[RMDB]
RNA sequence: GGGAACGACUCGAGUAGAGUCGAAAACACUGUGGAUCUGUUGAUGAGGUAUUCUCCGGUUGUGCGGGUGACGUGCGAGUGCUCUGGAGGAGACAGCUGUAAAAGGGCUGGCGGCAGCACGUCGGUGCGAGUAAUUUAGUUUCGACUAAAUUACUCGAAAAGAAACAACAACAACAAC
Reactivity to 2A3 in 0.01 (KOAc 150mM, MgCl2 10mM, bicine 150mM(pH8.5), 24C), signal-to-noise 9, nucleotides 027 to 126: c050a000c030u060g030u100g080g030a080u040c030u050g060u080u090g060a170u070g050a050g050g050u090a110u120u040c030u000c000c010g030g020u060u060g020u040g040c040g010g040g050u080g010a010c010g000u030g000c010g030a080g060u090g030c010u000c020u060g070g020a060g020g040a030g020a040c010a010g000c010u080g050u210a060a080a080a080g100g020g000c010u020g010g010c010g020g000c010a010g010c010a000c020g010u010c020g000g020u110g030
Reactivity to DMS in 0.01 (KOAc 150mM, MgCl2 10mM, bicine 150mM(pH8.5), 24C), signal-to-noise 6, nucleotides 027 to 126: c050a070c060u000g010u000g010g000a060u010c030u000g010u010u010g010a080u000g010a090g020g020u010a080u000u020c020u010c020c040g000g030u020u010g000u010g010c050g010g000g010u010g020a030c030g010u000g010c020g010a130g010u030g010c030u010c040u020g020g010a070g020g020a090g000a120c070a030g020c010u000g000u020a050a080a140a130g000g000g000c020u000g010g010c060g010g000c050a130g010c010a020c020g010u000c020g010g010u010g020